[RMDB]
RNA sequence: GGGAACGACUCGAGUAGAGUCGAAAAGGGUCGACAUGUACACUGCAAGGAAAUCCCACAUGCGGUCAAGAGCCUCAAACAUGUAUUCGCCUUAGUGGUAAGAAAAUAUUGUAGAUCAGGUUCUAGCAAUACCACGUGUAUUCGUACACGUGGUAUUAAAAGAAACAACAACAACAAC
Reactivity to DMS in 0.01 (KOAc 150mM, MgCl2 10mM, bicine 150mM(pH8.5), 24C), signal-to-noise 6, nucleotides 027 to 126: g000g000g020u000c010g010a050c040a030u000g020u000a060c090a080c020u000g000c040a060a100g000g010a050a060a090u000c010c010c010a120c150a090u010g020c120g000g010u000c050a110a040g010a080g000c020c020u000c110a090a110a060c050a020u000g010u000a090u000u000c060g000c020c010u010u000a080g020u000g000g000u000a060a100g010a030a040a090a060u010a060u010u000g000u000a070g000a110u010c150a030g010g010u000u000c020u000a080g010c260
Reactivity to 2A3 in 0.01 (KOAc 150mM, MgCl2 10mM, bicine 150mM(pH8.5), 24C), signal-to-noise 4, nucleotides 027 to 126: g030g000g000u020c020g030a030c010a030u060g010u050a030c050a000c040u020g050c030a040a030g040g030a040a110a010u050c010c050c000a010c010a060u170g020c060g010g010u010c020a040a020g010a020g040c010c000u040c070a110a090a040c020a010u050g020u080a080u020u030c010g020c010c010u050u020a110g060u100g130g010u030a090a060g040a040a040a010a010u160a030u060u120g030u050a020g020a130u110c020a020g020g050u010u000c010u020a020g000c010
The record gives the reactivity of an RNA of 177 nucleotides to DMS and 2A3. The reactions ran in a buffer of 150 mM KOAc, 10 mM MgCl2 and 150 mM bicine (pH 8.5), at 24 C.